[RMDB]
This 177-nucleotide RNA was probed chemically with DMS and 2A3. The reactions ran in a buffer of 150 mM KOAc, 10 mM MgCl2 and 150 mM bicine (pH 8.5), at 24 C. The DMS profile rests on 1,187 reads. For DMS the reverse transcriptase was MarathonRT.
RNA sequence: GGGAACGACUCGAGUAGAGUCGAAAAGUAAAUCAAAAUAAGAGAGGUAAUGUCUGACAAUAGAAUGGAUUCGAAUUUGUCCUAUUGGCACUGGUUAACCGUAAUUACCACCACCAAAAUAAAAAAACAUACUGCAUAACUUCGGUUAUGCAGUAUGAAAAGAAACAACAACAACAAC
Reactivity to DMS in 0.01 (KOAc 150mM, MgCl2 10mM, bicine 150mM(pH8.5), 24C), signal-to-noise 2, nucleotides 027 to 126: g000u010a050a060a060u010c070a060a060a100a080u000a060a100g000a030g000a110g010g030u000a020a020u010g000u000c040u000g000a030c040a020a080u000a040g010a040a050u000g010g010a010u000u000c180g010a090a090u000u000u000g020u000c010c020u020a050u000u000g010g010c050a030c060u000g000g010u000u000a050a070c080c040g000u000a070a040u020u000a100c020c020a110c110c100a110c050c080a050a020a050a070u010a040a030a030a130a080a050a170
Reactivity to 2A3 in 0.01 (KOAc 150mM, MgCl2 10mM, bicine 150mM(pH8.5), 24C), signal-to-noise 1, nucleotides 027 to 126: g010u030a000a100a030u080c020a020a020a100a180u270a300a030g070a010g000a010g070g040u050a070a000u030g080u030c010u040g000a010c000a000a040u030a050g060a050a020u050g020g040a020u000u190c050g050a160a120u040u040u040g030u050c010c000u010a060u050u000g040g000c070a020c010u040g000g030u020u030a040a060c000c030g010u030a030a000u020u020a010c000c030a030c010c010a050c040c020a060a020a100a030u180a030a150a050a020a010a010a000